[RMDB]
Source: RMDB libraries RFM100 and RFMREP, as collected in RNAgym. Structure probing data (DMS and 2A3) for a 177-nucleotide construct. The reactions ran in a buffer of 150 mM KOAc, 10 mM MgCl2 and 150 mM bicine (pH 8.5), at 24 C.

RNA sequence: GGGAACGACUCGAGUAGAGUCGAAAAUGAACUUAAGUUUAUGAUGAAGGUAUGGCUGUUGAGAUUAUUUGGUCGGGAUUGUAGUUUGAAGAUGUGCUCUUUUGAGCAGUCUCAACUUUGCUCGUUCCCCAAGUAUAUGGUUCGCCAUAUACUUGGGAAAAGAAACAACAACAACAAC
Reactivity to DMS in 0.01 (KOAc 150mM, MgCl2 10mM, bicine 150mM(pH8.5), 24C), signal-to-noise 5, nucleotides 027 to 126: u020g020a070a060c050u010u010a080a130g020u000u000u000a040u010g010a090u010g010a090a070g000g010u000a040u010g000g010c020u000g000u010u000g000a080g000a070u010u000a070u000u010u000g010g020u000c030g000g000g000a100u020u000g010u000a030g010u000u000u020g010a070a060g000a020u000g000u010g000c000u000c000u010u010u010u020g010a010g010c010a110g000u010c010u010c010a030a030c040u000u000u010g020c120u000c020g010u000u010c050
Reactivity to 2A3 in 0.01 (KOAc 150mM, MgCl2 10mM, bicine 150mM(pH8.5), 24C), signal-to-noise 6, nucleotides 027 to 126: u060g010a030a000c040u120u140a180a010g070u060u040u090a110u130g100a050u060g060a030a040g060g010u130a060u080g030g040c060u000g040u110u080g050a060g000a080u070u070a080u110u150u120g060g010u030c010g000g050g010a050u080u080g040u030a030g020u010u060u150g070a080a030g010a000u120g040u040g260c000u020c000u080u250u170u300g010a000g000c000a000g000u000c000u000c010a010a040c030u030u040u050g030c020u010c010g040u050u090c010